[RMDB]
RNA sequence: GGGAACGACUCGAGUAGAGUCGAAAACUCGAAAGAGACCUGCAUAUCUUAGGCAGAUGAACAAGUCUCGUCUGAAAAGCGAAAGCCCUAAGAUAUGCAGCUGUGACGACUUGUCGCAGAAAAUAAAAAUACGAGUACCGUUCGCGGUACUCGUAUUAAAAGAAACAACAACAACAAC
Reactivity to 2A3 in 0.01 (KOAc 150mM, MgCl2 10mM, bicine 150mM(pH8.5), 24C), signal-to-noise 4, nucleotides 027 to 126: c010u010c020g030a060a040a030g080a000g020a050c000c000u000g000c000a000u000a000u000c000u000u000a000g000g000c010a000g010a010u010g000a040a020c050a050a050g080u030c020u020c040g070u000c020u020g090a190a120a060a030g010c020g040a100a020a010g000c000c000c000u000a000a000g000a000u000a000u000g000c000a000g000c000u000g000u010g000a010c020g090a130c070u030u190g000u000c010g000c000a000g150a030a050a010a010u300a010a100a000
Reactivity to DMS in 0.01 (KOAc 150mM, MgCl2 10mM, bicine 150mM(pH8.5), 24C), signal-to-noise 2, nucleotides 027 to 126: c030u020c010g020a060a210a140g040a040g000a130c220c010u000g000c010a030u010a000u000c000u000u000a000g000g000c030a040g000a000u010g000a030a150c070a070a090g000u010c030u000c000g000u000c010u000g000a090a100a190a070g010c000g030a060a110a120g000c000c000c000u000a050a000g010a000u000a000u000g000c000a010g000c010u020g030u020g000a010c100g000a150c130u020u050g000u000c000g010c000a020g000a070a070a040a060u020a020a130a050
Annotation:
Structure probing data (2A3 and DMS) for a 177-nucleotide construct. Values are in units of 0.01, from 0 to 300, in steps of 10. DMS adducts were read by reverse transcription with MarathonRT.